[RMDB]
RNA sequence: GGGAACGACUCGAGUAGAGUCGAAAAGCAUCCCGCUUCGGCGGGAUGCAAAAGCGAUCGUGUCAUUGCCUCGAACGCAACACAUAUAAUGAUGGGCAGUGAAAAGUCUGGGCUUCGGCCCAGACAACUAAAAGGUAUUGUUCGCAAUACCUUUUAGAAAAGAAACAACAACAACAAC
Reactivity to 2A3 in 0.01 (KOAc 150mM, MgCl2 10mM, bicine 150mM(pH8.5), 24C), signal-to-noise 4, nucleotides 027 to 126: g010c000a000u020c030c000c000g050c010u040u040c110g130g000c020g010g040g010a000u000g000c000a000a000a000a020g010c000g020a040u040c020g030u020g100u110c020a020u010u030g020c010c000u020c010g040a060a010c010g030c020a050a080c070a000c030a050u180a010u090a300a180u190g110a080u090g030g010g000c000a000g000u000g060a070a060a040a020g000u020c000u000g010g010g000c010u050u080c250g060g000c000c000c000a010g010a000c000a000a010
Reactivity to DMS in 0.01 (KOAc 150mM, MgCl2 10mM, bicine 150mM(pH8.5), 24C), signal-to-noise 4, nucleotides 027 to 126: g010c010a010u000c000c000c010g020c000u000u010c170g040g040c000g030g000g020a000u000g000c000a000a030a100a120g010c020g010a050u000c040g010u000g010u000c010a020u000u000g020c020c000u000c050g020a050a090c020g010c020a110a090c120a090c110a080u010a090u010a120a090u000g020a110u000g010g010g020c010a010g010u010g000a120a090a080a100g000u000c000u000g000g000g010c000u000u020c180g030g000c000c000c000a000g000a000c010a020a090